[RMDB]
RNA sequence: GGGAACGACUCGAGUAGAGUCGAAAAUUCUCUACAGACAUCAGCUUUGCCUGAUAGGUAGGGAUCAUAGCAAAACACAGUUUUCCAAGGUGGUGAUAGGUGGAGUGAUAGUGCUCUGGAGAUGGCCCGAUGCCAAGAUGUUCGCAUCUUGGCAUCGAAAAGAAACAACAACAACAAC
Reactivity to DMS in 0.01 (KOAc 150mM, MgCl2 10mM, bicine 150mM(pH8.5), 24C), signal-to-noise 2, nucleotides 027 to 126: u010u000c000u010c000u020a070c060a120g030a300c200a030u000c020a020g010c020u020u000u000g010c180c010u010g060a000u000a070g010g010u010a050g000g010g000a060u000c220a100u020a090g010c090a040a050a070a100c110a050c090a100g000u000u000u000u000c020c010a120a150g020g050u000g010g020u000g000a100u000a050g020g010u000g020g010a070g010u000g010a070u000a050g010u010g000c040u000c020u000g000g010a060g000a090u000g000g020c050c070
Reactivity to 2A3 in 0.01 (KOAc 150mM, MgCl2 10mM, bicine 150mM(pH8.5), 24C), signal-to-noise 1, nucleotides 027 to 126: u000u000c000u030c000u000a000c000a070g290a070c070a080u040c010a010g060c040u210u300u300g000c060c020u030g000a020u040a070g110g070u010a010g050g010g010a000u000c050a110u110a030g060c020a000a000a240a000c090a040c020a070g010u020u110u090u000c000c030a010a070g000g040u060g020g000u080g080a040u060a110g100g040u100g000g020a100g000u010g070a070u060a110g090u110g040c000u000c000u100g030g000a030g000a030u060g040g030c060c030

Record summary:
The record gives the reactivity of an RNA of 177 nucleotides to DMS and 2A3. The DMS profile rests on 1,795 reads. The 2A3 profile rests on 815 reads. 2A3 adducts were read by reverse transcription with SuperScript II with manganese. Reactivities are given for positions 27 through 126. The reactions ran in a buffer of 150 mM KOAc, 10 mM MgCl2 and 150 mM bicine (pH 8.5), at 24 C.